[RMDB]
The record gives the reactivity of an RNA of 207 nucleotides to DMS and 2A3. The DMS profile rests on 5,402 reads. For 2A3, 4,482 sequencing reads were counted. For DMS the reverse transcriptase was MarathonRT. It was measured as part of the RMDB library M2RFOK. The RNA was probed in 150 mM KOAc, 10 mM MgCl2 and 150 mM bicine (pH 8.5) at 24 C. For 2A3 the reverse transcriptase was SuperScript II with manganese.
RNA sequence: GGGAACGACUCGAGUAGAGUCGAAAAAGCACGGUUUUUGAGGACGCAUUUUGUCAGUGCGGUAAUGCCCUCCUUUACACUUUCUCGCAUGGUGCGGGAGUGUGGAGAGGAAACAAAAGCUAGUCUCGAUAGGCGGUUAACUUCGGUUAACCGCCAACACUUGUGCAUAGUUCGCUAUGCACAAGUGAAAAGAAACAACAACAACAAC
Reactivity to DMS in 0.01 (KOAc 150mM, MgCl2 10mM, bicine 150mM(pH8.5), 24C), signal-to-noise 2, nucleotides 027 to 156: a100g020c040a120c060g010g010u000u000u000u000u000g010a150g010g000a080c010g000c030a070u000u010u000u030g020u000c150a110g030u010g000c000g030g010u010a060a060u010g030c030c010c000u000c040c020u000u010u010a030c010a010c010u000u000u000c010u000c010g000c030a300u010g010g020u000g000c000g000g000g000a010g020u000g020u010g000g000a020g000a040g000g000a080a060a090c040a040a070a110a110g000c040u000a250g010u000c000u000c030g010a160u000a090g030g030c020g010g010u010u000a010a010c010u010u020c300g050g020u000u010a010a030c000c010g000c000c000a010a040
Reactivity to 2A3 in 0.01 (KOAc 150mM, MgCl2 10mM, bicine 150mM(pH8.5), 24C), signal-to-noise 6, nucleotides 027 to 156: a000g080c060a030c040g010g040u020u010u010u040u040g060a070g010g040a020c020g010c050a050u030u020u040u110g150u140c120a050g010u010g020c030g000g020u110a060a050u140g020c010c000c000u030c020c010u020u050u070a000c000a000c010u080u120u040c020u020c020g040c030a100u260g270g020u260g140c000g000g000g000a000g000u010g000u000g010g000a030g010a010g000g040a060a060a010c010a010a020a000a000g030c030u080a040g030u020c020u020c060g080a100u120a130g000g000c010g000g000u000u000a010a000c010u020u050c120g030g010u000u010a000a000c010c000g000c000c000a000a000